[RMDB]
RNA sequence: GGGAACGACUCGAGUAGAGUCGAAAACACUUGAGCUUAGGAGUUUGAGACCAGUCUGGACAACAUAGGGAGACUCCAUCUCUACAAAAAUACAAAAAUUAGCUGACCCUGGUGGUGUGUGCUUGUGGUCCCUACGUGGGAGGCUGAGGUGGGAGUAAUAUGCAUCCUCAUUCGUGAGGAUGCAUAUAAAAGAAACAACAACAACAAC
Reactivity to DMS in 0.01 (KOAc 150mM, MgCl2 10mM, bicine 150mM(pH8.5), 24C), signal-to-noise 1, nucleotides 027 to 156: c030a100c030u000u000g000a070g010c040u000u000a070g000g010a080g020u010u010u010g000a120g040a130c020c030a090g030u010c020u000g020g040a070c070a040a080c060a110u000a110g010g020g030a120g010a070c010u010c060c040a080u000c010u000c000u000a170c110a000a070a030a070a090u000a070c030a030a120a020a050a070u010u000a050g040c020u000g000a060c010c030c040u000g050g020u000g020g060u000g000u000g000u000g000c050u050u010g040u000g020g000u000c020c010c030u000a030c110g020u010g010g010g000a080g000g030c040u000g010a060g030g020u010g010g000g010a080g010u000a030
Reactivity to 2A3 in 0.01 (KOAc 150mM, MgCl2 10mM, bicine 150mM(pH8.5), 24C), signal-to-noise 2, nucleotides 027 to 156: c050a010c040u050u090g010a010g030c010u040u090a070g030g030a060g040u050u150u100g070a070g020a030c010c020a030g050u060c060u080g040g030a040c030a080a000c050a140u120a050g000g030g000a040g030a020c020u080c030c010a020u030c070u010c000u020a020c050a070a160a020a030a020u160a020c070a020a190a050a050a070u190u040a040g000c000u020g080a100c020c000c020u030g060g000u040g010g010u030g010u010g000u040g000c000u050u040g030u040g020g020u050c000c030c000u060a050c070g050u170g000g030g010a060g040g000c040u050g010a010g010g040u050g020g060g000a030g020u020a040